An RNA of 177 nucleotides, treated with 2A3 and DMS and read out base by base. The 2A3 profile rests on 995 reads. The RNA was probed in 150 mM KOAc, 10 mM MgCl2 and 150 mM bicine (pH 8.5) at 24 C. 2A3 adducts were read by reverse transcription with SuperScript II with manganese. Source: RMDB library RFM100, as collected in RNAgym.

RNA sequence: GGGAACGACUCGAGUAGAGUCGAAAAAAAGGGUGGAAUAAAAGUAUCUCAUCAGGUAUAUUUAAAUUACACGGUAGUUAAGGAGGUAACGAUAAGUUGAGUAAUUUUAACAUCAUGGGAUCUUUAACUUUCAAGUCCCAUUCGUGGGACUUGAAAGAAAAGAAACAACAACAACAAC
Reactivity to 2A3 in 0.01 (KOAc 150mM, MgCl2 10mM, bicine 150mM(pH8.5), 24C), signal-to-noise 2, nucleotides 027 to 126: a000a000a000g110g010g050u070g010g030a040a010u140a090a120a000a000g030u020a020u030c030u000c020a090u080c060a050g070g000u050a120u010a010u060u100u060a070a070a040u000u030a010c070a000c030g040g000u030a050g000u080u010a000a090g130g010a050g090g060u040a020a000c000g010a050u020a180a040g050u050u050g020a030g000u060a060a040u040u110u000u000a080a020c060a010u150c010a000u070g080g000g000a000u010c000u020u030u020a020a080
Reactivity to DMS in 0.01 (KOAc 150mM, MgCl2 10mM, bicine 150mM(pH8.5), 24C), signal-to-noise 2, nucleotides 027 to 126: a000a000a050g000g000g030u010g020g020a130a140u030a020a040a040a060g010u010a050u020c000u000c020a080u000c160a030g000g020u000a050u040a050u010u020u010a000a050a050u000u020a030c010a050c080g000g000u020a070g010u010u000a090a150g020g010a090g000g010u030a010a020c080g000a080u020a040a090g000u000u000g000a060g000u010a050a050u030u020u000u010a080a050c040a080u020c170a040u000g000g030g000a030u030c000u010u030u000a100a070